[RMDB]
This 177-nucleotide RNA was probed chemically with DMS and 2A3. It was measured as part of the RMDB libraries RFM100 and RFMREP. For DMS the reverse transcriptase was MarathonRT. Reactivities are given for positions 27 through 126.
RNA sequence: GGGAACGACUCGAGUAGAGUCGAAAAUUCACAGCGCCCUCUCACAAGGUGGUGUGGGCAGUCUUUAGCACAUACCAGUGGUCACAACGGUUCUUGUUAAGUUCAGAGGUGACUGAAUAAAUAGGUCUCAUUGAUUCUUCUUCGGAAGAAUCAAUGAAAAAGAAACAACAACAACAAC
Reactivity to DMS in 0.01 (KOAc 150mM, MgCl2 10mM, bicine 150mM(pH8.5), 24C), signal-to-noise 5, nucleotides 027 to 126: u010u010c050a070c070a080g010c070g000c070c000c000u000c050u010c050a060c100a120a090g010g040u000g000g010u000g030u000g020g000g000c010a080g020u010c100u010u010u020a120g030c020a020c030a010u000a050c020c010a080g010u000g000g000u000c020a070c070a120a090c100g020g000u000u010c040u000u000g020u010u000a050a130g010u000u000c020a070g010a110g030g010u000g000a030c010u000g000a060a050u010a040a070a080u030a170g000g000u010c040
Reactivity to 2A3 in 0.01 (KOAc 150mM, MgCl2 10mM, bicine 150mM(pH8.5), 24C), signal-to-noise 4, nucleotides 027 to 126: u060u010c020a000c000a010g020c020g000c000c000c000u000c000u030c010a130c040a120a080g130g050u050g020g040u050g010u020g030g010g000c000a010g040u070c060u030u180u140a050g010c020a010c010a030u030a020c010c000a060g060u030g090g000u010c010a010c020a130a090c080g040g000u060u000c030u030u120g170u210u270a100a020g000u040u020c020a030g040a060g060g130u010g010a040c000u020g040a030a060u120a110a070a020u220a050g080g060u060c040